[RMDB]
RNA sequence: GGGAACGACUCGAGUAGAGUCGAAAAAUGCAGAGGCGAAGGCGGCCAAUACAGAUGGCAAGCAGGAGGCAGAGCUGCAAUGGCAGCUGGAGCGACUGCAGCGGCAGUCUGAUGAGCUGAGGGAGGAUAUAAGCAAAACCUUCGGGUUUUGCUUAUAAAAAGAAACAACAACAACAAC
Reactivity to DMS in 0.01 (KOAc 150mM, MgCl2 10mM, bicine 150mM(pH8.5), 24C), signal-to-noise 1, nucleotides 027 to 126: a070u010g010c060a040g020a090g010g000c060g040a110a140g010g000c060g020g000c010c050a040a090u010a110c140a120g000a060u000g020g010c070a060a100g020c080a050g000g050a070g010g010c030a130g000a100g000c020u000g000c020a120a060u000g010g020c000a040g010c040u000g000g000a110g010c040g000a080c010u000g040c030a160g000c120g010g000c010a020g020u000c050u000g000a080u000g000a080g000c060u000g000a110g030g020g030a100g030g010a110